[RMDB]
RNA sequence: GGGAACGACUCGAGUAGAGUCGAAAAGAUAUGGAACCCACACAAGCGAUAAGAUCCACAUCGGAAACGAUGUGAAGAUCUUUUGACGCUUGGUGGGUUCCUAAGUCAAAUCAGGCUUCGGCCUGAAGAUAUUCGACACGUUCGCGUGUCGAAUAUCAAAAGAAACAACAACAACAAC
Reactivity to DMS in 0.01 (KOAc 150mM, MgCl2 10mM, bicine 150mM(pH8.5), 24C), signal-to-noise 2, nucleotides 027 to 126: g020a020u000a300u010g030g000a010a010c000c000c010a020c010a150c000a010a000g010c000g010a150u010a020a010g000a000u010c000c010a030c000a030u010c000g020g000a080a070a240c000g000a010u000g010u010g000a090a100g040a000u000c010u000u000u020u000g030a170c070g010c000u000u000g000g050u000g010g010g030u000u000c010c010u000a010a100g030u000c010a130a090a190u010c010a010g010g000c000u000u040c210g050g010c000c000u000g000a030a060
Reactivity to 2A3 in 0.01 (KOAc 150mM, MgCl2 10mM, bicine 150mM(pH8.5), 24C), signal-to-noise 1, nucleotides 027 to 126: g010a000u040a010u040g000g000a000a000c010c020c010a000c010a040c000a030a020g020c010g160a070u040a300a030g030a000u000c010c010a000c000a020u010c000g000g000a030a080a010c010g000a020u020g000u010g010a020a040g010a000u010c030u010u040u040u120g190a040c090g000c020u000u030g000g000u000g010g030g000u000u000c000c000u000a010a000g000u020c000a010a000a110u070c000a000g000g020c010u010u270c300g170g000c000c020u000g010a000a010
Chemical mapping of a 177-nucleotide RNA with DMS and 2A3. The reactions ran in a buffer of 150 mM KOAc, 10 mM MgCl2 and 150 mM bicine (pH 8.5), at 24 C. Values cover nucleotides 27 to 126.